[RMDB]
Source: RMDB library OK3TST, as collected in RNAgym. This 207-nucleotide RNA was probed chemically with 2A3. For 2A3 the reverse transcriptase was SuperScript II with manganese. The 2A3 profile rests on 564 reads. The reactions ran in a buffer of 150 mM KOAc, 10 mM MgCl2 and 150 mM bicine (pH 8.5), at 24 C.
RNA sequence: GGGAACGACUCGAGUAGAGUCGAAAAUGAAAGAACCUCACUCAGAGGCCAAUAAUCCAAUUGGGACAUUGGCAAAUGCAAAAUCUUAUAACUGCUGGAUCUUCUUCUGUUUGUGUGGUUAUAUAUGUGUUACUUGUGUAAUGCCUAUUAAAAAAAACCCUGAUUAAAUGUUCGCAUUUAAUCAGGGAAAAGAAACAACAACAACAAC
Reactivity to 2A3 in 0.01 (KOAc 150mM, MgCl2 10mM, bicine 150mM(pH8.5), 24C), signal-to-noise 2, nucleotides 027 to 156: u070g040a000a080a150g110a040a010c000c000u000c010a010c000u040c020a010g010a000g020g030c000c000a000a010u020a020a010u040c020c040a020a280u120u170g040g000g000a000c010a060u000u000g000g000c000a010a000a100u080g000c010a030a040a100a280u050c060u080u300a150u070a240a030c070u040g000c040u050g010g060a140u040c030u130u000c000u070u000c000u070g040u030u220u060g020u010g000u010g020g000u010u030a070u010a000u010a000u050g040u000g020u010u010a010c040u140u190g100u040g010u200a070a000u030g000c000c000u040a060u090u120a050a040a130a000a010a300a040a130